[RMDB]
RNA sequence: GGGAACGACUCGAGUAGAGUCGAAAAACAUCGAUAUGGAAGGGUGGCGAGAGGUACACCGAAGCUACGUCGGAAACGACGUAGCCUCCGUGUACUACCCACCUCGCACCCUUCCUAAGUCUACCAACUUCGAAGAUACGUUCGCGUAUCUUCGAAGAAAAGAAACAACAACAACAAC
Reactivity to DMS in 0.01 (KOAc 150mM, MgCl2 10mM, bicine 150mM(pH8.5), 24C), signal-to-noise 3, nucleotides 027 to 126: a100c220a120u000c180g000a030u000a300u020g000g030a010a030g000g000g030u000g070g010c000g030a010g000a140g010g000u000a010c020a010c010c300g020a010a060g000c000u000a000c010g020u000c000g000g010a070a040a130c010g010a010c020g030u000a010g020c000c010u000c010c300g000u000g000u000a000c010u000a030c050c150c150a300c130c010u000c020g000c000a090c000c000c000u000u000c000c000u000a000a070g010u000c040u000a250c090c070a040a180
Reactivity to 2A3 in 0.01 (KOAc 150mM, MgCl2 10mM, bicine 150mM(pH8.5), 24C), signal-to-noise 2, nucleotides 027 to 126: a000c080a170u270c100g040a030u000a040u150g000g040a000a000g120g090g000u120g280g170c000g000a010g000a000g020g030u000a000c000a010c040c210g040a010a000g020c000u000a000c000g000u000c000g060g000a020a020a000c010g000a000c000g010u000a000g000c010c000u000c030c010g000u000g010u000a000c000u000a020c030c010c000a040c020c000u030c000g000c000a000c000c000c000u000u010c000c000u000a000a000g000u040c020u060a070c050c050a100a110
An RNA of 177 nucleotides, treated with DMS and 2A3 and read out base by base. It was measured as part of the RMDB library TTRDES. The 2A3 profile rests on 5,401 reads.